[RMDB]
An RNA of 177 nucleotides, treated with 2A3 and DMS and read out base by base. The data come from the RNA Mapping Database (RMDB), libraries RFM100 and RFMREP. The reactions ran in a buffer of 150 mM KOAc, 10 mM MgCl2 and 150 mM bicine (pH 8.5), at 24 C.

RNA sequence: GGGAACGACUCGAGUAGAGUCGAAAAAGACUCAUACUUACGAGUAUGAGUCAAUUUUGUGGCUAGCACUCGACAUGUGACCUGUGUUCGGUAAUCACAUCACAGUCAGAGUUCUAGCUACACGGAACCAAACCGUCUAUUUCGAUAGACGGUUUGGAAAAGAAACAACAACAACAAC
Reactivity to 2A3 in 0.01 (KOAc 150mM, MgCl2 10mM, bicine 150mM(pH8.5), 24C), signal-to-noise 4, nucleotides 027 to 126: a000g010a000c000u000c000a030u000a000c000u080u020a050c300g140a010g020u000a020u000g000a000g010u010c000a000a000u020u020u010u030g010u000g000g030c000u000a000g000c030a000c000u000c000g060a030c090a300u010g000u010g000a040c020c110u050g020u010g000u070u250c190g150g090u240a140a100u080c010a020c000a000u030c020a000c000a000g000u000c080a090g000a000g010u000u020c000u010a000g010c000u000a000c000a000c000g060g010a020a050
Reactivity to DMS in 0.01 (KOAc 150mM, MgCl2 10mM, bicine 150mM(pH8.5), 24C), signal-to-noise 1, nucleotides 027 to 126: a130g000a000c000u000c050a020u000a030c000u000u000a130c300g010a010g000u000a010u000g000a000g000u000c000a000a040u000u010u000u000g010u000g010g020c000u000a000g000c070a010c000u000c020g000a020c030a090u000g020u000g000a000c130c240u020g020u000g000u000u030c230g000g040u070a120a050u040c000a000c020a050u000c000a010c020a040g000u020c000a170g000a000g020u000u030c000u000a000g020c020u000a030c000a060c300g000g010a110a130